RNA sequence: GGGAACGACUCGAGUAGAGUCGAAAAAAGUGAGCCCAGAGAGGACCCAGGUCCACGCAGGCCGCACCGUCAGGCUGUACUGCAGGGCUGCAGGCGUGCCUAGCGCCACCAUCACCUGGAGGAAGGAAGGGGGCAGCCUCCCACCACAGGUGAGGAAUAAAAUAUCGUCAUUCGUGACGAUAUUUUAAAAAGAAACAACAACAACAAC
Reactivity to 2A3 in 0.01 (KOAc 150mM, MgCl2 10mM, bicine 150mM(pH8.5), 24C), signal-to-noise 2, nucleotides 027 to 156: a030a000g090u040g020a000g010c030c010c050a030g050a010g020a040g130g010a020c040c040c060a130g090g060u000c020c010a030c080g010c010a010g000g000c020c010g040c060a160c040c040g170u200c030a030g020g050c020u060g030u130a200c040u100g050c040a050g000g010g050c030u030g020c030a040g030g000c010g040u090g030c040c050u030a040g000c000g020c030c020a030c010c020a130u030c010a000c000c000u040g020g060a140g040g040a200a060g020g010a020a100g010g010g000g010g000c000a070g030c000c010u010c000c000c010a040c000c010a030c010a010g000g010u010g010a020g010g020a020a020
Reactivity to DMS in 0.01 (KOAc 150mM, MgCl2 10mM, bicine 150mM(pH8.5), 24C), signal-to-noise 3, nucleotides 027 to 156: a060a060g020u000g000a120g010c030c010c040a130g020a190g020a140g010g010a120c030c020c080a190g020g000u000c040c030a070c050g030c030a120g060g040c000c030g050c000a220c060c040g000u000c060a070g030g010c020u010g020u010a090c060u010g000c000a190g010g030g030c000u010g000c060a060g030g010c010g030u000g010c020c020u000a110g020c010g010c030c030a060c010c010a170u000c020a000c010c000u000g000g020a140g000g010a130a040g020g000a070a100g000g020g020g040g020c080a120g010c010c010u000c010c000c020a090c000c020a100c020a040g000g000u010g000a040g000g020a090a130